[RMDB]
Source information
Structure probing data (DMS and 2A3) for a 207-nucleotide construct. Reactivities are given for positions 27 through 156.

RNA sequence: GGGAACGACUCGAGUAGAGUCGAAAAGUUCACUCUUAGCGUGGAGGUUUAACUACGCUCGUUCCCCAUAUCGGUGUGGGCGCACCGGAUUUAUAAAUCAAAGUCCUUUAGGGAACGGAAAGGAACAAAAAUCCAUGGGAGUUCGCUCCCAUGGAAAGUCCAUUUGAUAGUUCGCUAUCAAAUGGACAAAAGAAACAACAACAACAAC
Reactivity to DMS in 0.01 (KOAc 150mM, MgCl2 10mM, bicine 150mM(pH8.5), 24C), signal-to-noise 1, nucleotides 027 to 156: g000u000u000c060a020c020u010c020u000u000a070g030c000g120u000g000g000a080g000g030u000u000u000a090a190c030u010a040c010g050c010u010c030g000u000u000c000c000c010c050a220u030a040u000c000g040g020u030g020u000g050g010g030c050g020c030a010c020c000g000g000a150u000u010u000a130u020a040a060a040u000c080a090a090a070g040u010c010c040u000u010u010a090g000g000g010a080a070c030g030g000a010a090a050g000g030a120a100c050a020a150a050a110a150u000c010c010a030u000g030g000g000a000g040u000u010c300g020c000u000c020c010c020a020u010g030g000a010a010a020
Reactivity to 2A3 in 0.01 (KOAc 150mM, MgCl2 10mM, bicine 150mM(pH8.5), 24C), signal-to-noise 1, nucleotides 027 to 156: g020u030u050c020a020c070u030c010u070u040a020g020c000g000u010g010g010a050g050g030u060u210u130a010a040c030u030a000c000g020c000u020c000g000u000u000c000c000c010c000a050u110a060u120c000g000g000u010g000u000g030g030g010c050g000c000a010c000c000g000g000a020u000u250u010a230u130a170a020a010u070c140a060a000a000g010u000c000c000u040u050u110a040g020g000g010a030a010c020g020g030a070a070a050g070g010a020a020c050a040a150a060a000a020u000c000c000a000u000g000g000g000a000g030u060u000c060g010c080u000c000c000c000a000u000g010g000a000a010a000
Reactivities are rounded to 0.1 and cut off at 0 and 3.
The RNA was probed in 150 mM KOAc, 10 mM MgCl2 and 150 mM bicine (pH 8.5) at 24 C.
For DMS, 2,069 sequencing reads were counted.
As a SHAPE reagent, 2A3 marks flexible, mostly unpaired nucleotides at the ribose 2'-OH.